[RMDB]
RNA sequence: GGGAACGACUCGAGUAGAGUCGAAAAUCGCCUUCGCGUCCGUCUUCGCGGACGAGUGUUGCGGUAAGUCCUAGACGGCGACGUGAUUGGAGGUCUGAGGUGAGUCGGAAGACGGGGGCGGGGAGGAAAGAUAUUUACGGUUCGCCGUAAAUAUCUUAAAAGAAACAACAACAACAAC
Reactivity to DMS in 0.01 (KOAc 150mM, MgCl2 10mM, bicine 150mM(pH8.5), 24C), signal-to-noise 4, nucleotides 027 to 126: u010c030g010c020c020u010u000c020g030c000g000u000c010c000g010u010c040u010u010c060g000c050g000g000a020c010g010a110g010u000g010u000u000g010c040g010g010u000a100a140g000u000c020c030u010a120g000a050c060g010g010c140g000a130c050g010u010g010a180u000u000g000g010a080g010g000u000c030u000g000a110g010g010u000g000a260g000u000c020g010g010a040a040g000a040c010g000g010g010g000g020c020g000g000g000g000a060g000g000a080
Reactivity to 2A3 in 0.01 (KOAc 150mM, MgCl2 10mM, bicine 150mM(pH8.5), 24C), signal-to-noise 5, nucleotides 027 to 126: u040c010g050c020c000u090u140c040g030c080g300u020c000c010g030u020c010u120u170c300g300c020g300g000a010c020g000a040g030u170g030u070u080g050c030g000g030u060a030a050g070u020c010c000u040a070g020a090c050g010g030c010g030a040c020g020u050g030a180u040u140g050g030a050g060g070u030c030u040g060a060g050g050u060g030a030g050u030c030g000g000a010a000g000a010c020g000g000g000g040g000c010g010g000g020g000a030g030g040a080

The record gives the reactivity of an RNA of 177 nucleotides to DMS and 2A3. The DMS profile rests on 9,632 reads. Values cover nucleotides 27 to 126. The reactions ran in a buffer of 150 mM KOAc, 10 mM MgCl2 and 150 mM bicine (pH 8.5), at 24 C.